[RMDB]
An RNA of 207 nucleotides, treated with 2A3 and read out base by base. The RNA was probed in 150 mM KOAc, 10 mM MgCl2 and 150 mM bicine (pH 8.5) at 24 C.
RNA sequence: GGGAACGACUCGAGUAGAGUCGAAAAAGCAUUUCCUAUGUGCUGUUAACGCGAUUCAACCUUAAUAGGAUAUGCUAAACACUGCCGUUUGAAGUCUGUUUAGAAGAAACUUAAUCAAGCUAGCAUCAUGUUGGUUGUUUAUCACUUUUCAUGAUGCGAGGAUAAUGCUCUUCGGAGCAUUAUCCUCAAAAGAAACAACAACAACAAC
Reactivity to 2A3 in 0.01 (KOAc 150mM, MgCl2 10mM, bicine 150mM(pH8.5), 24C), signal-to-noise 2, nucleotides 027 to 156: a000g010c010a000u090u000u070c000c000u000a010u000g010u020g000c020u030g060u300u130a210a100c040g040c130g290a090u180u120c060a030a300c050c060u270u300a060a000u000a000g000g000a000u000a000u000g020c010u000a000a010a000c050a020c000u000g000c000c000g040u000u000u000g030a040a010g010u020c000u000g000u000u010u040a020g000a020a000g000a010a250a110c170u180u180a080a000u120c000a000a020g030c040u050a000g010c020a010u020c000a000u000g000u020u040g060g000u050u060g110u120u150u090a200u270c080a050c040u160u260u180u060c000a000u020g000a000u010g000c010
2A3 adducts were read by reverse transcription with SuperScript II with manganese.